Chemical mapping of a 177-nucleotide RNA with 2A3 and DMS.
The reactions ran in a buffer of 150 mM KOAc, 10 mM MgCl2 and 150 mM bicine (pH 8.5), at 24 C.
Reactivities are given for positions 27 through 126.
2A3 adducts were read by reverse transcription with SuperScript II with manganese.
DMS adducts were read by reverse transcription with MarathonRT.
RNA sequence: GGGAACGACUCGAGUAGAGUCGAAAACCAGGCCCUUAAGCCCCAACCAGACGAUUGCCCCAGGAAUGAGUGAAGAUGGAGGGGUUCAGCAAGGCCCCCCUGCCACCCCAGACUCACACAUGUAGAUACAUAAAAAUGCAUUCGUGCAUUUUUAUGUAAAAGAAACAACAACAACAAC
Reactivity to 2A3 in 0.01 (KOAc 150mM, MgCl2 10mM, bicine 150mM(pH8.5), 24C), signal-to-noise 6, nucleotides 027 to 126: c010c000a010g040g030c020c000c000u030u110a090a010g030c020c010c000c000a020a030c010c010a020g030a060c040g040a060u040u140g050c010c000c010c010a010g070g050a110a080u110g020a030g050u070g060a050a110g050a100u110g000g050a120g020g000g000g010u050u110c040a040g040c040a070a050g030g000c000c000c000c010c000c000u010g030c000c010a030c000c000c000c000a010g040a060c010u020c010a020c000a010c010a050u100g030u070a040g040a160u040
Reactivity to DMS in 0.01 (KOAc 150mM, MgCl2 10mM, bicine 150mM(pH8.5), 24C), signal-to-noise 6, nucleotides 027 to 126: c010c010a140g020g000c030c010c020u000u030a080a100g000c010c020c010c070a080a090c050c050a030g020a070c060g010a080u010u020g020c030c000c010c030a050g010g020a080a050u010g000a050g010u010g010a080a110g020a120u000g000g010a170g020g000g000g020u010u000c080a080g000c130a090a110g010g020c030c030c000c000c020c010u000g000c020c040a050c040c010c010c030a080g000a130c040u010c020a040c070a080c090a040u000g010u020a060g020a180u000